[RMDB]
RNA sequence: GGGAACGACUCGAGUAGAGUCGAAAAGCAGCGAAACUGCGCGCCGAGGAGCUCGGCCGUUGGGCGGCGGCUGCGGACCGCGCUGCUGCCGAGCAGGCGGCCAAAAUCGCGGAGCUCGAAGCCGAGACCCUCCUUAUCUUUUCGAAGAUAAGGAGGGAAAAGAAACAACAACAACAAC
Reactivity to DMS in 0.01 (KOAc 150mM, MgCl2 10mM, bicine 150mM(pH8.5), 24C), signal-to-noise 5, nucleotides 027 to 126: g020c020a040g020c040g010a100a080a300c080u010g020c030g020c110g010c010c010g000a180g000g000a090g000c020u000c030g010g010c000c030g010u010u010g000g010g020c010g000g010c010g010g020c030u000g030c150g000g010a140c100c100g000c010g010c030u000g000c010u000g010c090c090g000a040g020c040a110g010g010c000g000g000c010c050a050a100a070a070u010c050g020c040g000g000a110g010c020u000c010g000a120a110g010c010c030g010a100g010a180
Reactivity to 2A3 in 0.01 (KOAc 150mM, MgCl2 10mM, bicine 150mM(pH8.5), 24C), signal-to-noise 4, nucleotides 027 to 126: g000c020a000g010c050g140a120a050a080c030u030g000c020g000c030g010c030c010g070a120g140g100a060g040c020u020c030g000g020c030c020g040u040u070g070g110g020c010g020g020c010g010g020c010u050g000c040g040g050a240c060c050g070c030g010c030u020g000c000u010g070c030c010g010a030g030c030a030g000g010c000g000g000c010c030a050a050a010a050u140c070g000c040g100g040a040g000c020u000c030g030a070a020g030c020c000g050a040g040a090
This 177-nucleotide RNA was probed chemically with DMS and 2A3. Conditions: 150 mM KOAc, 10 mM MgCl2 and 150 mM bicine (pH 8.5), 24 C. For DMS, 6,470 sequencing reads were counted.